[RMDB]
RNA sequence: GGGAACGACUCGAGUAGAGUCGAAAAAUCGUACGAUGCUAUACGCGCGAUGCGCUAGCCGAUUACGUAUAAUUACGUAGCGCAUCGCGUAAUUACGCGUACGAUAUGCCGAUGCUAGCAUUAGCGCUCGUAGGUCGAGAUUCGUCUCGACCUACGAAAAAGAAACAACAACAACAAC
Reactivity to 2A3 in 0.01 (KOAc 150mM, MgCl2 10mM, bicine 150mM(pH8.5), 24C), signal-to-noise 2, nucleotides 027 to 126: a000u010c000g000u010a010c020g100a190u060g060c140u000a000u020a050c160g020c000g000c000g020a000u000g000c010g020c040u050a030g100c080c110g110a120u060u050a040c040g110u070a060u070a250a170u250u050a010c020g010u010a000g010c000g000c000a010u000c000g000c000g010u000a000a000u010u000a000c010g010c010g010u010a000c030g010a010u020a020u060g000c000c000g060a090u190g000c030u050a100g010c030a210u220u020a010g010c000g040c080
Reactivity to DMS in 0.01 (KOAc 150mM, MgCl2 10mM, bicine 150mM(pH8.5), 24C), signal-to-noise 2, nucleotides 027 to 126: a020u000c000g010u000a020c000g020a020u000g030c260u010a040u000a080c300g020c010g000c000g000a000u000g010c000g000c000u010a040g010c080c040g000a050u000u000a110c190g020u010a050u020a050a060u010u000a030c050g040u000a020g030c000g030c000a010u000c000g010c000g010u000a020a080u000u000a030c030g000c000g000u000a020c020g010a000u000a040u000g010c060c020g000a130u010g030c030u000a030g040c110a100u000u000a050g020c070g030c210